[RMDB]
RNA sequence: GGGAACGACUCGAGUAGAGUCGAAAAGCACUAGGUACUACAGUACGAUCGGUACGAUCCUAGCAUGAUGGUACUGUGCUAGCGUACCUGUCUAGAGGAUCCUAGCAUCGAUCACUAGUCAUGUGAGGGGUGAGUAGCAUUUCGAUGCUACUCACCCAAAAGAAACAACAACAACAAC
Reactivity to 2A3 in 0.01 (KOAc 150mM, MgCl2 10mM, bicine 150mM(pH8.5), 24C), signal-to-noise 2, nucleotides 027 to 126: g010c050a020c090u020a020g070g000u070a010c040u070a080c040a090g090u120a030c060g060a070u060c050g000g030u000a010c030g020a050u050c030c000u010a030g010c020a030u070g040a060u090g130g140u190a090c140u130g010u020g000c000u000a010g000c010g020u010a020c000c000u010g010u030c010u010a060g030a060g040g060a050u090c000c000u010a000g000c020a090u050c030g060a010u030c010a000c020u060a040g120u060c030a080u190g020u020g060a050g030
Reactivity to DMS in 0.01 (KOAc 150mM, MgCl2 10mM, bicine 150mM(pH8.5), 24C), signal-to-noise 3, nucleotides 027 to 126: g020c160a080c040u000a020g040g010u000a120c040u010a070c160a120g060u000a060c080g010a030u000c300g020g020u020a030c060g010a270u010c130c050u010a050g000c050a040u010g010a080u000g010g020u010a130c060u010g030u000g000c030u000a020g020c070g000u010a020c020c000u000g000u000c020u000a160g010a150g010g000a100u010c030c050u010a120g010c060a050u000c090g000a080u000c060a080c000u000a050g000u000c140a060u000g020u000g010a100g010
An RNA of 177 nucleotides, treated with 2A3 and DMS and read out base by base.
The RNA was probed in 150 mM KOAc, 10 mM MgCl2 and 150 mM bicine (pH 8.5) at 24 C.
Values cover nucleotides 27 to 126.